[RMDB]
RNA sequence: GGGAACGACUCGAGUAGAGUCGAAAACGCGCGAACGUAAAUUAUAUUGCGCGAACGGGCCCGCACGUGCGGAAAGGGCCCGAAACGCACGUGCGAAAUAACGCGCAAUAUAAUUUACGGAAGCGCGGCGGAUAUAUAAGUUCGCUUAUAUAUCCGCAAAAGAAACAACAACAACAAC
Reactivity to DMS in 0.01 (KOAc 150mM, MgCl2 10mM, bicine 150mM(pH8.5), 24C), signal-to-noise 2, nucleotides 027 to 126: c000g010c000g010c000g010a200a300c020g000u000a010a000a030u000u000a000u000a000u020u000g000c000g010c000g000a050a070c130g000g010g010c150c070c010g030c000a000c010g000u010g010c010g000g010a100a080a070g000g000g000c040c060c010g000a020a100a190c010g010c010a000c000g020u000g000c000g000a070a090a090u040a080a160c040g050c000g000c000a020a000u000a000u000a000a000u000u010u000a000c010g000g010a090a240g060c000g040c000g020
Reactivity to 2A3 in 0.01 (KOAc 150mM, MgCl2 10mM, bicine 150mM(pH8.5), 24C), signal-to-noise 6, nucleotides 027 to 126: c010g020c000g010c000g050a190a010c000g010u000a000a000a000u000u000a000u000a000u000u000g000c000g000c000g010a020a010c020g040g040g030c010c010c000g000c000a010c000g010u010g000c010g010g050a140a100a090g070g020g030c000c000c000g000a030a020a000c000g000c010a000c010g000u010g010c000g030a070a040a030u160a060a020c000g000c000g000c000a000a000u000a000u000a000a000u000u000u000a000c000g000g010a010a000g000c000g000c000g000